[RMDB]
RNA sequence: GGGAACGACUCGAGUAGAGUCGAAAAACUCUGAGCGUAAUCGCGUCUUGACUAGACUAUAGGUGACGUGAGUAUCUAUCCCAUUCUGCAUAGCGAUGGGAUAAUACGCUGAUCUAUAGUCACGGAAUCAUAUCAUACGGUUCGCCGUAUGAUAUGAAAAAGAAACAACAACAACAAC
Reactivity to DMS in 0.01 (KOAc 150mM, MgCl2 10mM, bicine 150mM(pH8.5), 24C), signal-to-noise 9, nucleotides 027 to 126: a070c050u000c040u010g010a050g020c020g020u010a090a110u000c020g020c030g010u000c020u010u010g010a150c190u010a130g010a020c000u000a000u000a010g010g010u000g010a100c080g010u000g010a040g010u000a010u000c210u000a010u000c000c000c000a010u000u000c050u000g030c140a120u000a070g020c140g010a010u000g010g000g000a000u000a000a010u000a030c000g000c010u000g010a040u000c010u000a010u000a010g000u000c010a130c270g010g000a120a120
Reactivity to 2A3 in 0.01 (KOAc 150mM, MgCl2 10mM, bicine 150mM(pH8.5), 24C), signal-to-noise 9, nucleotides 027 to 126: a000c070u060c090u140g100a030g010c010g050u120a080a080u060c030g010c010g060u020c030u120u190g080a100c050u090a080g010a000c000u000a000u010a020g060g030u080g050a030c040g030u020g030a020g010u010a010u020c110u010a010u010c020c000c000a000u090u020c040u120g120c090a220u180a170g040c040g040a000u000g000g000g000a000u000a000a000u010a000c000g000c000u010g010a000u000c000u000a000u000a000g000u000c010a000c040g070g070a060a080